[RMDB]
RNA sequence: GGGAACGACUCGAGUAGAGUCGAAAAUCGCGUUGGCUGCCUCAUUCAAGGAAUUAGCGUGCCUUCAUGCUAAGGGUUUGAUAUCUGCUAAAACCCGGUGCAUUCAUCAAUGCAGGUUAAGCCAAAGAAACGGCUCACGAAUUCGUUCGUGAGCCAAGUACCUAUAAGGCUUCGGCCUUAUAGGUACAAAAGAAACAACAACAACAAC
Reactivity to 2A3 in 0.01 (KOAc 150mM, MgCl2 10mM, bicine 150mM(pH8.5), 24C), signal-to-noise 3, nucleotides 027 to 156: u080c020g000c040g080u030u030g010g000c000u000g060c010c000u010c000a020u030u060c050a060a020g030g040a080a150u080u070a130g060c040g030u080g030c010c020u070u170c060a010u030g000c020u030a020a040g030g010g000u040u010u010g060a050u040a110u230c130u230g090c050u120a020a010a010a050c000c010c000g000g000u040g010c000a010u030u090c010a080u040c040a060a050u050g050c080a000g030g020u070u160a070a020g000c000c010a020a010a000g050a030a110a010c080g000g010c000u000c000a010c010g000a010a000u060u100c140g040u070u000c000g000u040g100a000g000c000c000a000a000
Reactivity to DMS in 0.01 (KOAc 150mM, MgCl2 10mM, bicine 150mM(pH8.5), 24C), signal-to-noise 2, nucleotides 027 to 156: u000c040g000c060g010u000u010g000g050c020u020g010c020c020u000c050a040u000u020c080a050a090g000g020a070a090u000u000a130g010c180g060u030g040c070c050u000u000c050a040u000g020c030u010a300a170g000g010g030u000u000u000g000a180u000a050u000c100u000g030c090u010a110a060a010a040c000c000c000g020g060u010g010c060a060u000u010c040a070u000c040a040a090u000g010c080a020g020g050u000u000a080a070g020c000c000a010a050a120g030a060a050a130c110g000g030c000u000c000a010c000g000a050a110u000u000c300g010u000u010c010g000u000g000a010g010c010c000a000a050